[RMDB]
RNA sequence: GGGAACGACUCGAGUAGAGUCGAAAAGAUAUGGAUGCUCAACAGCUGAUGAGCACUAUGAAGUCGGAAACGAUGGAGUGCCAUCAGACAUGAGCAUCCUAAGUCAAAACAUGCCUUCGGGCAUGAAGAUACGACGCUAGUUCGCUAGCGUCGUAUCAAAAGAAACAACAACAACAAC
Reactivity to 2A3 in 0.01 (KOAc 150mM, MgCl2 10mM, bicine 150mM(pH8.5), 24C), signal-to-noise 3, nucleotides 027 to 126: g030a010u050a030u120g010g000a000u000g000c000u000c010a030a120c060a280g040c030u010g010a010u010g050a070g300c020a010c020u300a300u300g070a040a000g010u010c010g000g030a080a040a110c010g000a020u040g000g060a020g030u010g020c000c000a000u000c010a000g000a000c020a050u060g000a000g000c000a000u000c000c000u000a000a000g000u000c030a000a000a100a130c010a000u010g010c000c010u040u070c300g090g000g000c000a000u010g010a020a030
Reactivity to DMS in 0.01 (KOAc 150mM, MgCl2 10mM, bicine 150mM(pH8.5), 24C), signal-to-noise 3, nucleotides 027 to 126: g000a030u000a300u000g000g000a010u010g000c000u000c000a050a050c280a130g020c010u000g000a000u000g020a120g010c010a000c000u010a190u040g010a100a210g000u000c000g020g000a110a100a230c010g020a000u000g000g000a010g050u000g020c000c000a000u020c000a000g010a040c080a150u000g000a000g000c000a020u000c000c000u010a030a060g000u000c050a090a090a090a300c000a010u000g000c000c000u010u000c240g030g000g000c010a010u000g000a060a100